[RMDB]
RNA sequence: GGGAACGACUCGAGUAGAGUCGAAAAGUGAUCACGGCCGCCCAAGCCAUUGCCGCCACCUUCCUCUCAGGGGCUGCCUGUUCCCAGGCUCUGUGGUUCUCUGUCCCCCCUGUGACAGAAGCAGUGCCCAGGGCAGGGGGCUCGCAGCUGGCAGGGGGGAUGUACUAUCUUUCGAGAUAGUACAUCCAAAAGAAACAACAACAACAAC
Reactivity to DMS in 0.01 (KOAc 150mM, MgCl2 10mM, bicine 150mM(pH8.5), 24C), signal-to-noise 1, nucleotides 027 to 156: g020u010g010a090u000c080a100c050g000g030c000c050g000c010c050c020a110a140g000c070c030a150u010u000g030c020c020g000c020c030a040c040c020u000u000c020c020u000c040u000c040a080g030g000g000g030c000u010g030c020c030u000g020u000u000c010c010c020a300g010g000c010u000c010u000g030u020g010g020u000u000c050u000c010u010g000u000c050c010c020c060c050c030u000g010u000g010a100c020a050g000a040a090g000c120a150g010u000g010c020c010c010a070g010g000g000c050a160g020g010g020g020g040c000u000c070g010c000a090g000c010u010g000g030c020a070g000g030g020g010
Reactivity to 2A3 in 0.01 (KOAc 150mM, MgCl2 10mM, bicine 150mM(pH8.5), 24C), signal-to-noise 3, nucleotides 027 to 156: g060u040g040a090u080c090a050c110g040g000c010c020g050c020c040c020a030a010g040c050c020a050u050u200g020c030c000g030c020c000a060c020c010u070u080c010c030u030c030u020c070a070g030g010g100g000c020u010g000c010c000u000g000u100u120c010c010c020a030g150g030c010u000c010u040g080u170g030g000u090u040c020u000c010u040g040u030c020c020c010c000c000c050u050g030u040g020a010c000a000g020a020a010g040c080a020g050u020g040c000c000c000a000g000g000g030c000a020g030g000g000g000g000c010u010c010g000c000a000g000c000u020g020g010c010a020g020g010g000g000